[RMDB]
RNA sequence: GGGAACGACUCGAGUAGAGUCGAAAAAAAAUGAGUGCGUGGUAGCACAAACCAGACCAAUCUUCGGCACAUGGACGCACAAGUACAGCUUCGCCUGUACAAAGCGAACAACAACAACAACAAGCAAACCAAUUAUUGUCUUCGGACAAUAAUUGGUAAAAGAAACAACAACAACAAC
Reactivity to DMS in 0.01 (KOAc 150mM, MgCl2 10mM, bicine 150mM(pH8.5), 24C), signal-to-noise 2, nucleotides 027 to 126: a050a020a060a090u000g020a120g020u010g020c030g010u010g000g050u000a140g010c050a070c040a030a080a090c010c040a110g020a080c050c030a070a060u010c070u000u010c080g020g030c060a040c090a120u010g000g030a120c040g040c020a040c120a050a170g010u000a040c010a020g010c050u010u040c180g000c200c030u000g000u010a030c030a100a100a070g000c000g000a010a040c050a020a020c020a010a060c020a020a010c030a080a020c090a060a090g010c250a050a070